Description:
An RNA of 177 nucleotides, treated with DMS and 2A3 and read out base by base. For DMS the reverse transcriptase was MarathonRT. The DMS profile rests on 15,750 reads. It was measured as part of the RMDB library OK2TRN. For 2A3, 23,108 sequencing reads were counted.
RNA sequence: GGGAACGACUCGAGUAGAGUCGAAAAGACGAGCACCUGCUGCUGGUUGCCAGCGACCGGAUCUCGGCGUACGACUACGUCCUGGACAGCACCAUCCCGGACAAGGGCCGCGUCCUGACCGCCAUGACUCUCUAAAUCAUUUCGAUGAUUUAGAGAGAAAAGAAACAACAACAACAAC
Reactivity to DMS in 0.01 (KOAc 150mM, MgCl2 10mM, bicine 150mM(pH8.5), 24C), signal-to-noise 9, nucleotides 027 to 126: g000a090c070g000a090g010c100a070c030c030u000g010c060u000g010c020u000g010g010u000u010g020c030c030a050g020c040g010a060c060c040g000g010a100u010c040u010c070g010g000c040g010u000a100c090g010a090c080u000a080c160g000u000c020c030u000g000g010a050c060a110g020c060a050c060c040a300u000c020c000c030g000g000a050c060a100a130g000g000g010c030c040g010c110g010u000c010c020u000g000a070c080c040g010c050c040a090u000g000a200
Reactivity to 2A3 in 0.01 (KOAc 150mM, MgCl2 10mM, bicine 150mM(pH8.5), 24C), signal-to-noise 7, nucleotides 027 to 126: g050a020c040g010a010g010c030a040c050c030u040g020c030u020g000c010u020g070g050u190u140g130c050c010a020g030c030g050a070c010c030g030g080a180u050c030u020c060g030g000c020g030u080a060c040g060a040c050u070a030c090g010u010c000c020u010g000g020a020c030a080g030c020a050c030c010a030u020c000c000c000g020g000a020c020a050a070g050g000g010c020c020g020c040g030u020c010c000u030g050a070c010c020g020c020c010a060u090g030a060